[RMDB]
RNA sequence: GGGAACGACUCGAGUAGAGUCGAAAAGGGGUCCUAAUCCGAGUCUUGGAUUUAGCUAAGAGGUGGUACUGAAGCCUCCACGGUACCACUACCCACCUUAGCUUGUCAGACUCGCGAUUAGGACGGAGGCACCCAAAUGAGUGACUUCGGUCACUCAGUCAGGUGAUAGGUUCGCCUAUCACCUGACAAAAGAAACAACAACAACAAC
Reactivity to 2A3 in 0.01 (KOAc 150mM, MgCl2 10mM, bicine 150mM(pH8.5), 24C), signal-to-noise 3, nucleotides 027 to 156: g000g000g000g020u000c010c000u010a010a000u010c000c000g040a000g030u010c070u300u300g130g010a070u280u300u180a010g010c000u000a000a010g000a000g000g000u000g010g000u000a010c010u010g010a050a010g000c010c000u010c000c000a020c020g000g000u010a000c010c010a010c000u010a030c010c060c010a060c000c000u000u000a010g000c000u000u010g010u000c060a050g000a000c000u000c000g000c110g010a000u000u000a010g000g000a010c000g000g000a000g000g000c010a050c000c000c000a030a120a050u160g010a000g000u000g000a000c030u020u080c300g080g000u010c010a000c000u000c000a000